Source: RMDB library OK3TST, as collected in RNAgym. Structure probing data (2A3) for a 207-nucleotide construct. For 2A3, 374 sequencing reads were counted. The reactions ran in a buffer of 150 mM KOAc, 10 mM MgCl2 and 150 mM bicine (pH 8.5), at 24 C. 2A3 adducts were read by reverse transcription with SuperScript II with manganese. Values cover nucleotides 27 to 156.
RNA sequence: GGGAACGACUCGAGUAGAGUCGAAAAAAUUCAAAUUUAGCAAUCAUGAGUGAAGUACCCACGAUGUGCUAAGCAUCUACCUCUGCAGAUAGAAGAACACUUACUGUUCCUGAGCAUGGGAGGGAAUAGAAGUUCCUGGGUCCUGGCCUCACCUCAACGGUAGUGCACGAUUCGUCGUGCACUACCGAAAAGAAACAACAACAACAAC
Reactivity to 2A3 in 0.01 (KOAc 150mM, MgCl2 10mM, bicine 150mM(pH8.5), 24C), signal-to-noise 1, nucleotides 027 to 156: a000a000u190u100c040a090a040a060u110u120u160a070g020c020a030a020u010c030a010u160g040a030g090u200g070a220a080g010u060a060c050c050c070a020c020g030a060u080g010u030g060c050u010a030a030g050c010a000u000c000u120a010c000c090u080c060u180g000c080a010g080a070u120a020g080a210a050g030a050a000c000a010c130u080u240a090c100u160g000u000u030c000c010u050g080a140g000c040a120u070g020g020g020a030g020g000g000a030a010u070a050g140a140a030g010u010u000c000c030u000g000g020g300u000c000c000u010g080g000c000c000u060c100a080c020c080u120c030a110a060